[RMDB]
RNA sequence: GGGAACGACUCGAGUAGAGUCGAAAAGUUUCGGCCGAUCUGGCUGGUUCCGUGUUGCCUCCGCCACAUCCGCAUCUCUUCCACCGGCUCUCCCGACGCCUCGCGCUCGGUCGAGAGUCUACCUCCUAACAUAUCAACGUUUCGACGUUGAUAUGUUAAAAGAAACAACAACAACAAC
Reactivity to DMS in 0.01 (KOAc 150mM, MgCl2 10mM, bicine 150mM(pH8.5), 24C), signal-to-noise 4, nucleotides 027 to 126: g000u000u010u020c010g000g010c000c010g000a150u020c090u020g010g000c030u010g020g010u000u000c030c030g020u000g020u010u010g000c030c010u000c020c040g010c060c040a070c080a080u000c040c040g000c040a060u000c030u010c030u000u000c030c040a110c130c070g000g000c010u000c010u000c010c010c000g000a040c090g020c010c050u020c270g010c050g000c130u010c010g000g010u010c140g000a030g020a050g010u000c010u000a080c120c030u000c060c060u000
Reactivity to 2A3 in 0.01 (KOAc 150mM, MgCl2 10mM, bicine 150mM(pH8.5), 24C), signal-to-noise 8, nucleotides 027 to 126: g010u010u030u070c020g010g000c010c040g060a200u050c080u150g040g000c010u020g020g040u070u020c030c020g040u050g060u070u080g040c010c010u030c020c010g030c010c010a040c010a040u020c010c010g030c020a080u020c030u010c000u090u020c030c040a070c040c010g010g000c000u000c000u000c010c000c000g000a030c070g010c000c070u110c150g040c020g010c050u000c000g010g040u130c080g000a010g000a000g020u000c000u010a020c000c010u040c000c010u000